[RMDB]
RNA sequence: GGGAACGACUCGAGUAGAGUCGAAAACAGUCUAUCAUUGUUGGACAUUUGGGUUGGUCCCAAGUCUUUGCUAUUGUGAAUAGUGCCGCAAUAAACAUACGUGUGCAUGUGUCUUUAGAGAAGCAUGAUUCGUAAACCUUUGGGUAUAUACCCAGUAACUUACAAAGACAUUCGUGUCUUUGUAAGUAAAAGAAACAACAACAACAAC
Reactivity to DMS in 0.01 (KOAc 150mM, MgCl2 10mM, bicine 150mM(pH8.5), 24C), signal-to-noise 3, nucleotides 027 to 156: c020a110g000u010c040u020a130u020c070a160u010u000g010u010u000g020g020a080c030a090u000u010u000g010g010g000u000u000g040g010u010c000c000c000a050a230g020u000c060u000u000u000g020c020u000a110u000u020g010u000g020a060a120u000a110g020u020g000c070c030g000c020a080a100u010a060a060a060c040a140u000a040c040g030u000g020u010g050c060a050u010g020u000g000u000c030u000u000u000a160g010a150g000a090a050g000c020a010u000g000a160u000u000c030g030u010a030a060a070c070c060u000u000u000g010g010g000u000a180u010a150u000a040c000c000c000a050g010u000a100
Reactivity to 2A3 in 0.01 (KOAc 150mM, MgCl2 10mM, bicine 150mM(pH8.5), 24C), signal-to-noise 7, nucleotides 027 to 156: c020a020g090u050c050u110a170u140c090a120u100u120g010u050u050g010g040a040c050a130u100u070u070g030g000g010u010u070g040g070u090c010c000c000a000a020g020u030c090u080u130u110g020c020u020a020u070u060g030u040g070a140a110u100a140g090u070g090c040c020g010c040a030a050u080a110a120a010c040a040u090a040c030g010u030g050u100g140c020a010u020g030u000g040u040c030u020u140u110a150g020a010g010a150a010g000c010a010u020g010a050u060u060c020g020u030a010a070a130c020c000u060u090u060g030g000g020u030a100u010a010u070a190c000c000c000a010g010u000a000